An RNA of 177 nucleotides, treated with 2A3 and DMS and read out base by base.
RNA sequence: GGGAACGACUCGAGUAGAGUCGAAAAGAUAUGGACAGGCUUUGAUCGUAUUCACGUUUGACGUCGGAAACGACCGAGUGACUACGGGAGCCUGUCCUAAGUCAAAACUGUAGCUUCGGCUACAGAACUCAUAUAAUACCUUCGGGUAUUAUAUGAGAAAAGAAACAACAACAACAAC
Reactivity to 2A3 in 0.01 (KOAc 150mM, MgCl2 10mM, bicine 150mM(pH8.5), 24C), signal-to-noise 6, nucleotides 027 to 126: g000a020u060a040u150g000g000a000c000a010g010g030c040u190u170u190g110a130u270c010g000u020a020u010u020c010a010c050g100u090u220u300g120a070c050g000u020c000g010g040a040a060a070c020g010a010c000c000g030a030g030u000g000a000c010u010a010c020g000g010g020a000g000c000c000u000g000u000c000c000u000a000a000g000u000c010a000a010a090a160c010u000g000u010a000g020c000u030u060c300g180g000c010u000a000c000a000g000a010a010
Reactivity to DMS in 0.01 (KOAc 150mM, MgCl2 10mM, bicine 150mM(pH8.5), 24C), signal-to-noise 7, nucleotides 027 to 126: g000a040u000a300u000g000g000a010c010a010g010g010c000u000u000u010g020a110u010c010g000u000a010u000u000c000a010c010g010u010u000u010g000a150c300g000u000c010g020g000a100a090a150c010g010a010c000c010g000a090g010u010g000a020c080u000a000c000g000g010g010a010g000c000c000u000g000u000c000c000u000a010a060g010u000c040a080a070a080a150c000u000g000u000a000g010c010u000u010c250g040g000c000u000a000c000a000g000a100a150
It was measured as part of the RMDB library TTRDEL. The reactions ran in a buffer of 150 mM KOAc, 10 mM MgCl2 and 150 mM bicine (pH 8.5), at 24 C. High 2A3 reactivity points to a flexible backbone, as in loops and unpaired stretches. For DMS the reverse transcriptase was MarathonRT.